[RMDB]
RNA sequence: GGGAACGACUCGAGUAGAGUCGAAAAAUGUUAGUACAAAGGUUUUUCGGACAAAGUCAUCGCUUGAGAUAGACAUCAAGAAGUACGAUAAGUCACAAGACCUGGCUGUCCUACUACUUGAAUGUAAUCCCGUCUAUUUCUUCGGAAAUAGACGGGAAAAAGAAACAACAACAACAAC
Reactivity to DMS in 0.01 (KOAc 150mM, MgCl2 10mM, bicine 150mM(pH8.5), 24C), signal-to-noise 1, nucleotides 027 to 126: a010u000g010u000u000a120g060u010a110c120a060a150a050g020g000u000u020u000u000u010c100g040g020a060c110a050a040a130g000u000c050a070u020c090g010c030u020u000g000a040g010a180u010a090g010a000c040a010u000c000a000a000g010a160a020g010u000a040c260g000a020u010a120a210g040u000c000a040c090a080a120g010a160c230c090u000g010g010c000u000g000u040c030c020u000a000c050u000a130c000u000u000g040a020a050u000g010u000a100a140
Chemical mapping of a 177-nucleotide RNA with DMS. The RNA was probed in 150 mM KOAc, 10 mM MgCl2 and 150 mM bicine (pH 8.5) at 24 C. For DMS, 677 sequencing reads were counted. It was measured as part of the RMDB library OK2TST. For DMS the reverse transcriptase was MarathonRT.